[RMDB]
RNA sequence: GGGAACGACUCGAGUAGAGUCGAAAAGAUAUGGAUUAGCAGGCGAUAAGCUGCCAUCGGAAACGAUGGGCAGCUUUUGACGCCUAGCUAAUCCUAAGUCAAACUUCGAUCCUUCGGGAUCGAAGAAUCCUGUUAUAGUCUUCGGACUAUAACAGGAAAAAGAAACAACAACAACAAC
Reactivity to 2A3 in 0.01 (KOAc 150mM, MgCl2 10mM, bicine 150mM(pH8.5), 24C), signal-to-noise 2, nucleotides 027 to 126: g010a000u040a020u100g000g010a010u010u010a000g020c010a000g020g020c030g150a190u040a300a010g000c000u000g020c010c000a000u010c000g020g000a050a020a020c020g010a000u020g010g050g010c010a000g000c000u020u000u010u030g060a040c020g010c000c000u030a020g000c010u000a000a000u000c000c010u000a020a000g000u000c020a090a050a080c000u010u000c000g000a000u000c000c000u030u110c300g100g000g000a000u020c010g000a000a000g000a000a040
Reactivity to DMS in 0.01 (KOAc 150mM, MgCl2 10mM, bicine 150mM(pH8.5), 24C), signal-to-noise 3, nucleotides 027 to 126: g010a030u000a140u010g000g000a020u000u000a000g010c000a030g010g030c000g020a150u000a000a040g010c000u000g020c000c010a020u010c010g010g000a050a040a070c000g020a010u010g020g010g010c010a000g010c000u000u000u000u000g020a220c070g030c000c000u020a070g000c000u000a000a000u000c000c000u000a010a050g000u010c010a140a160a290c010u000u000c000g000a000u000c000c000u010u010c260g040g010g010a010u000c000g010a000a000g000a090a070

The record gives the reactivity of an RNA of 177 nucleotides to 2A3 and DMS. 2A3 adducts were read by reverse transcription with SuperScript II with manganese. For DMS the reverse transcriptase was MarathonRT. The data come from the RNA Mapping Database (RMDB), library TTRDES. Conditions: 150 mM KOAc, 10 mM MgCl2 and 150 mM bicine (pH 8.5), 24 C.